[RMDB]
RNA sequence: GGGAACGACUCGAGUAGAGUCGAAAAGAGAUAAACCUAGAAAUUCAUACGUUGGCAGUGUACCACCUCGUUCACCUCCUCCGAUCGUUGUCAAGUCAGAUGGAGAAGAGCUUGAUGAUGAGGAAGAUCGUAAUAAUGCGUUCGCGCAUUAUUACGAAAAAGAAACAACAACAACAAC
Reactivity to DMS in 0.01 (KOAc 150mM, MgCl2 10mM, bicine 150mM(pH8.5), 24C), signal-to-noise 3, nucleotides 027 to 126: g000a110g020a120u010a040a070a150c050c010u010a050g020a120a100a110u010u010c070a070u010a090c150g010u010u000g020g030c020a040g010u000g010u000a080c070c050a050c050c020u000c010g020u010u000c040a110c080c020u000c030c030u000c010c000g010a090u000c030g020u000u000g030u010c050a040a030g000u000c090a090g020a120u010g020g020a090g010a100a100g010a150g010c010u000u010g000a020u010g000a020u010g000a060g000g010a060a080g000a070
Reactivity to 2A3 in 0.01 (KOAc 150mM, MgCl2 10mM, bicine 150mM(pH8.5), 24C), signal-to-noise 1, nucleotides 027 to 126: g090a000g010a060u060a080a140a000c050c000u070a050g170a150a140a040u160u070c040a010u080a220c080g080u080u090g040g000c060a030g060u000g000u120a030c010c010a000c010c010u030c040g080u130u030c020a050c050c000u010c010c000u040c010c010g080a100u000c000g030u020u070g050u010c000a000a020g000u000c030a030g020a110u090g120g100a130g030a080a070g060a010g020c030u040u020g020a010u020g000a000u000g000a030g030g030a030a000g050a100